Structure probing data (2A3 and DMS) for a 177-nucleotide construct. For 2A3, 929 sequencing reads were counted. For DMS the reverse transcriptase was MarathonRT. Conditions: 150 mM KOAc, 10 mM MgCl2 and 150 mM bicine (pH 8.5), 24 C. The DMS profile rests on 1,825 reads.
RNA sequence: GGGAACGACUCGAGUAGAGUCGAAAACAAAUACCUAAAAUUGGUCGCUGUGACCGUGCACGUUCCAUUACUGCGUCAGCGACACCUGUAGAACGCAGCCAGGCUAAAUCGCUAAGGGUUGCCUUAGAAGGUUUUAACCAUUCGUGGUUAAAACCUUAAAAGAAACAACAACAACAAC
Reactivity to 2A3 in 0.01 (KOAc 150mM, MgCl2 10mM, bicine 150mM(pH8.5), 24C), signal-to-noise 2, nucleotides 027 to 126: c060a010a140a030u280a160c030c050u170a110a130a110a080u080u180g110g000u000c000g000c070u040g060u110g160a130c000c060g030u050g010c070a020c140g090u120u000c070c060a080u130u220a140c040u050g030c000g000u040c020a000g090c010g000a010c000a020c010c010u100g070u070a090g020a190a010c060g000c000a000g000c020c010a030g070g000c010u180a180a160a040u300c100g000c030u040a080a040g000g000g070u020u080g030c000c000u050u030a030g000
Reactivity to DMS in 0.01 (KOAc 150mM, MgCl2 10mM, bicine 150mM(pH8.5), 24C), signal-to-noise 3, nucleotides 027 to 126: c150a100a080a090u000a120c040c030u000a010a030a090a180u010u010g000g020u000c010g020c060u010g010u020g000a030c110c090g020u010g010c080a300c080g000u010u030c040c110a120u010u000a090c060u000g030c010g030u000c010a060g000c010g020a050c070a080c090c050u000g000u010a110g000a070a070c100g000c070a050g020c090c030a110g010g000c130u000a040a080a110u000c120g020c010u000a020a050g020g000g000u000u010g000c050c080u000u000a030g000